[RMDB]
RNA sequence: GGGAACGACUCGAGUAGAGUCGAAAAUGUGAAAUAGGAUUUAAUCCUAUUUAAUAAUGAUGUGAAAUAGUGAAAAUAAUAAAGUGGUAAUGAUGAUGACAGCUACUGUUCAGUAGGUACUCCGUAGGCACCAGGUACUAUUUCCUUUUCACUGGAAGGAUAUUACCCCAUUCGUGGGGUAAUAUCCAAAAGAAACAACAACAACAAC
Reactivity to 2A3 in 0.01 (KOAc 150mM, MgCl2 10mM, bicine 150mM(pH8.5), 24C), signal-to-noise 1, nucleotides 027 to 156: u130g030u040g010a030a010a000u000a000g010g010a020u100u080u300a070a050u040c000c000u000a000u010u040u000a020a000u090a000a060u060g080a060u130g000u010g050a020a010a050u050a060g030u010g030a130a050a010a000u200a050a060u170a070a140a000g060u050g070g020u040a200a050u100g050a000u010g030a030u070g000a010c050a110g040c040u040a020c030u030g050u210u080c020a040g010u060a030g030g060u040a080c040u000c050c030g040u020a000g140g000c020a000c000c000a000g100g000u030a030c040u000a060u000u090u080c000c000u070u050u010u040c020a010c000u070g080g050a140a030
Reactivity to DMS in 0.01 (KOAc 150mM, MgCl2 10mM, bicine 150mM(pH8.5), 24C), signal-to-noise 1, nucleotides 027 to 156: u020g050u020g000a060a040a000u000a030g000g000a050u000u000u000a130a140u000c000c010u000a010u000u020u000a070a110u000a080a150u000g000a160u000g010u000g000a040a050a100u000a030g010u010g000a060a020a030a070u000a070a080u000a070a070a090g040u000g000g010u010a060a090u000g000a050u000g010a090u000g010a080c180a090g000c070u000a010c020u000g000u000u000c060a100g040u020a020g010g010u000a030c040u000c020c130g010u000a080g030g020c050a030c030c010a030g000g040u000a030c020u000a060u010u000u000c020c050u020u000u000u000c020a030c030u000g010g000a140a180